[RMDB]
The data come from the RNA Mapping Database (RMDB), library OK3TST.
This 207-nucleotide RNA was probed chemically with 2A3.
2A3 adducts were read by reverse transcription with SuperScript II with manganese.

RNA sequence: GGGAACGACUCGAGUAGAGUCGAAAAGAAGGUGGGUCAGGGCUCGGACCGCACCAAUUAGAUGUAACUAUUUCGAGCCCAUUAAUGGCGUUUUCGCCUAGGUCAGAGCACGCCGUGGCUCGACCGAAAUAAAUAAAUAAUAACACGGCGGAUAGAACCGUAGUAGGUAGUUCGCUACCUACUACGGAAAAGAAACAACAACAACAAC
Reactivity to 2A3 in 0.01 (KOAc 150mM, MgCl2 10mM, bicine 150mM(pH8.5), 24C), signal-to-noise 1, nucleotides 027 to 156: g120a070a030g030g080u050g000g040g040u000c000a120g000g000g010c020u000c000g030g000a020c000c000g260c090a030c000c000a000a020u160u110a070g080a090u070g010u260a050a060c090u080a100u040u260u230c000g010a000g000c040c000c000a000u000u080a030a130u010g000g000c000g050u120u080u140u220c010g070c000c000u000a040g000g000u040c080a090g000a000g020c000a000c040g000c000c000g000u010g050g000c000u000c000g000a000c000c000g000a010a010a010u090a000a020a000u020a050a000a000u070a010a010u050a040a000c000a010c000g000g000c080g010g040a020u070a040g070a030a050
Conditions: 150 mM KOAc, 10 mM MgCl2 and 150 mM bicine (pH 8.5), 24 C.